An RNA of 207 nucleotides, treated with DMS and 2A3 and read out base by base. For DMS the reverse transcriptase was MarathonRT.

[RMDB]
RNA sequence: GGGAACGACUCGAGUAGAGUCGAAAAUGCUCAGCUAUGGGAGGCGGGCCUCAUCUGCACUAAUACCAGAACAAUCUUUGAAAGUUGCUUUUUUUAAGUGCUAAUAUCAAGCUUAUUUUCAGCCUUUUUCUCACUCUCCCAUGAGAGGAGAUUGGAACAAAAUGACGGAUUUCGAUCCGUCAUUUUGAAAAGAAACAACAACAACAAC
Reactivity to DMS in 0.01 (KOAc 150mM, MgCl2 10mM, bicine 150mM(pH8.5), 24C), signal-to-noise 1, nucleotides 027 to 156: u020g000c090u000c020a110g020c040u000a080u010g040g010g020a080g020g030c000g050g000g030c040c020u000c070a160u000c060u020g000c060a110c020u010a090a090u000a090c070c050a170g040a080a100c030a070a080u010c030u010u040u030g020a100a110a190g010u010u000g030c000u000u000u050u020u000u000u020a100a090g000u010g000c080u000a120a110u010a130u010c080a070a130g000c010u000u000a060u010u000u000u000c030a050g030c030c010u000u000u000u000u010c000u020c040a050c030u010c020u010c030c030c040a150u000g000a080g010a070g030g020a010g000a080u000u010g020g010a000a120
Reactivity to 2A3 in 0.01 (KOAc 150mM, MgCl2 10mM, bicine 150mM(pH8.5), 24C), signal-to-noise 3, nucleotides 027 to 156: u070g000c020u020c020a060g030c050u080a070u190g000g040g050a010g030g030c080g000g000g020c010c000u030c000a160u020c030u050g050c040a010c040u070a060a060u070a220c060c020a020g030a070a020c030a060a080u100c090u140u160u230g080a160a070a090g040u130u100g040c040u150u130u010u020u040u050u100a090a010g020u050g080c030u050a120a110u050a080u260c100a090a040g030c020u100u050a040u050u140u050u030c030a040g040c000c000u070u100u020u120u020c010u030c010a120c030u030c020u020c010c060c020a110u230g060a050g020a040g000g000a000g000a010u020u050g040g020a050a000
High DMS reactivity at an A or C suggests that its Watson-Crick edge is free.